[RMDB]
RNA sequence: GGGAACGACUCGAGUAGAGUCGAAAAACCAGAAACGGGAUAGUUUUGCCGCAGCGAAAAUCGAACCAAAGAUGAUUCCGAAAAGGUACGAACAGGCUGCGACGACAACAGUCAUCAUCGCCCCGCGACGUGCCCUGAUAUUCGUAUCAGGGCACGUAAAAGAAACAACAACAACAAC
Reactivity to DMS in 0.01 (KOAc 150mM, MgCl2 10mM, bicine 150mM(pH8.5), 24C), signal-to-noise 2, nucleotides 027 to 126: a140c000c000a140g000a030a070a070c020g000g000g000a030u000a090g020u000u000u000u080g040c030c030g010c010a070g020c000g000a120a080a140a110u000c000g000a050a010c000c020a060a080a130g000a030u050g000a110u020u000c060c130g010a130a180a100a070g000g000u000a000c040g010a000a010c100a060g000g060c000u010g000c010g010a000c010g020a020c180a010a000c020a140g010u020c060a030u000c080a010u000c080g030c010c000c020c000g000c140g030
Reactivity to 2A3 in 0.01 (KOAc 150mM, MgCl2 10mM, bicine 150mM(pH8.5), 24C), signal-to-noise 2, nucleotides 027 to 126: a000c080c000a060g140a050a170a000c060g080g010g020a140u110a180g040u090u120u070u170g010c010c000g000c000a000g030c000g140a100a020a000a050u030c000g020a000a010c040c000a090a130a080g070a000u300g040a050u230u110c080c030g080a060a000a140a070g000g040u020a100c010g000a050a020c030a100g160g000c000u010g000c000g020a020c000g020a020c030a040a010c020a040g150u110c040a050u020c010a070u130c110g010c000c010c020c000g060c020g100